[RMDB]
RNA sequence: GGGAACGACUCGAGUAGAGUCGAAAAUCAGCAAGCAAUGCUCUAUAGGCCAAAUCCGGCCCACUACUUAUUUUUAUUUUAUUUUUGAGACAGUGUUUCACUCUUGUUGCCCAGGCUGGAGUGCAAUGGUGUGAUCACGGCUCACCACAACCUCCGAAUGGUAUUCGGAUUUCGAUCCGAAUACCAUAAAAGAAACAACAACAACAAC
Reactivity to 2A3 in 0.01 (KOAc 150mM, MgCl2 10mM, bicine 150mM(pH8.5), 24C), signal-to-noise 1, nucleotides 027 to 156: u050c000a000g000c020a030a030g130c020a030a110u170g000c000u010c010u080a210u090a110g000g010c050c050a100a080a150u150c120c140g000g000c000c000c010a000c000u150a020c000u100u060a100u290u190u040u070u010a190u140u040u180u110a210u210u100u040u090u040g020a020g030a090c100a090g000u000g020u040u110u180c000a020c020u000c020u040u010g020u010u000g000c010c000c000a020g060g060c000u140g020g020a000g010u060g040c040a040a090u080g000g050u000g000u010g010a040u080c020a000c020g020g000c000u010c000a010c050c000a040c030a000a110c010c010u040c050c000g060a030